Record summary: Structure probing data (DMS and 2A3) for a 177-nucleotide construct. For 2A3, 1,793 sequencing reads were counted. The reactions ran in a buffer of 150 mM KOAc, 10 mM MgCl2 and 150 mM bicine (pH 8.5), at 24 C.

RNA sequence: GGGAACGACUCGAGUAGAGUCGAAAAGAUAUGGAACGACCAUGGAGCUUGGCGAACAGGGUCGGAAACGACCCGGAGCUAUGAAGUGGCGUUCCUAAGUCAAAACUGCUAGCUUCGGCUAGCAGAAUCAUAUUCGUGUCUUCGGACACGAAUAUGAAAAAGAAACAACAACAACAAC
Reactivity to DMS in 0.01 (KOAc 150mM, MgCl2 10mM, bicine 150mM(pH8.5), 24C), signal-to-noise 2, nucleotides 027 to 126: g020a030u010a300u000g000g010a030a010c000g010a220c000c010a020u010g000g030a170g000c170u000u000g030g010c040g010a130a090c150a150g010g000g020u000c000g000g000a030a080a150c000g000a030c000c000c000g000g000a150g040c010u000a090u000g010a220a190g000u010g000g000c010g000u000u000c010c010u000a020a050g020u020c050a080a060a180a160c000u000g010c000u000a020g010c000u000u010c300g040g020c000u010a010g000c000a000g000a010a080
Reactivity to 2A3 in 0.01 (KOAc 150mM, MgCl2 10mM, bicine 150mM(pH8.5), 24C), signal-to-noise 2, nucleotides 027 to 126: g040a020u060a040u170g000g010a030a000c000g300a300c000c000a030u010g040g050a070g140c180u160u110g120g100c100g060a090a080c200a220g030g040g030u040c030g010g000a050a090a000c010g000a010c000c000c000g000g000a000g000c000u170a230u300g010a070a030g000u000g020g000c010g000u000u000c000c000u000a040a000g010u010c020a010a020a200a210c000u000g000c010u000a000g000c000u080u100c300g060g000c000u000a000g000c000a000g000a010a000